[RMDB]
RNA sequence: GGGAACGACUCGAGUAGAGUCGAAAAAAAGUUAGCGUACUAGAGUCGCCGUGAGUACGCUAUGGUUCCGUGAGACUCUACUCGAGCGUAUCACGGAACCCACGUACAUACCGUACCUGCUAUAAAAGUAUUGUAACACGUUCGCGUGUUACAAUACAAAAGAAACAACAACAACAAC
Reactivity to DMS in 0.01 (KOAc 150mM, MgCl2 10mM, bicine 150mM(pH8.5), 24C), signal-to-noise 2, nucleotides 027 to 126: a080a010a060g010u000u000a000g000c000g000u020a010c020u000a090g030a110g010u000c070g030c030c050g000u030g020a040g000u000a000c020g010c010u000a010u000g040g000u010u000c010c030g030u000g020a240g000a010c000u000c010u000a010c010u010c030g000a010g000c040g010u000a080u020c030a050c030g000g000a040a060c050c010c000a060c180g020u010a030c050a110u000a100c110c030g010u010a030c040c050u000g040c080u010a060u000a090a060a080a070
Reactivity to 2A3 in 0.01 (KOAc 150mM, MgCl2 10mM, bicine 150mM(pH8.5), 24C), signal-to-noise 3, nucleotides 027 to 126: a010a010a000g100u020u010a010g000c000g000u000a000c010u020a020g100a090g130u100c050g010c140c030g090u130g030a000g000u000a000c000g000c000u000a010u020g040g000u080u030c020c000g000u040g000a040g000a000c000u000c000u030a000c000u020c020g010a010g000c000g010u010a050u020c030a010c000g000g020a020a020c010c050c010a020c050g040u050a040c020a060u100a130c000c040g010u010a030c010c020u050g010c030u100a060u150a300a100a060a020
Description: The record gives the reactivity of an RNA of 177 nucleotides to DMS and 2A3. It was measured as part of the RMDB library M2PK90. For 2A3, 4,043 sequencing reads were counted. For DMS the reverse transcriptase was MarathonRT. The reactions ran in a buffer of 150 mM KOAc, 10 mM MgCl2 and 150 mM bicine (pH 8.5), at 24 C. Reactivities are rounded to 0.1 and cut off at 0 and 3.